[RMDB]
RNA sequence: GGGAACGACUCGAGUAGAGUCGAAAAGUGCAGCGGUGGACCGAGAGCAAGUUGUGAAAUUGCGACUGCGGCCGCCAUCGACUAUUCCGUUGGAGGAUCGGCUCCGAGCGGCACAUGAGCGAGCGAAGUUUUACGGAGCUUUCGAGCUCCGUAAAACAAAAGAAACAACAACAACAAC
Reactivity to DMS in 0.01 (KOAc 150mM, MgCl2 10mM, bicine 150mM(pH8.5), 24C), signal-to-noise 2, nucleotides 027 to 126: g020u000g000c060a030g010c050g000g050u010g000g020a080c050c020g000a090g010a160g000c020a040a050g010u000u010g030u000g010a110a120a140u000u000g000c000g000a060c010u000g010c050g050g010c030c020g010c000c030a030u000c000g030a070c240u000a120u020u000c060c020g030u010u000g020g010a000g020g000a180u010c030g010g000c060u010c020c010g010a090g020c020g000g000c040a020c050a080u000g000a130g010c040g000a080g000c120g020a100a100
Reactivity to 2A3 in 0.01 (KOAc 150mM, MgCl2 10mM, bicine 150mM(pH8.5), 24C), signal-to-noise 1, nucleotides 027 to 126: g040u040g010c020a040g000c010g060g070u170g030g040a030c030c010g020a050g020a010g140c090a160a060g020u010u060g140u130g120a300a300a240u230u280g020c020g000a010c000u070g000c000g020g000c010c020g000c000c000a000u000c020g040a020c070u090a160u130u130c120c010g000u070u080g000g000a000g020g040a120u110c030g010g050c120u000c010c000g010a040g030c020g000g080c000a000c000a070u230g060a000g030c030g020a020g000c060g030a190a000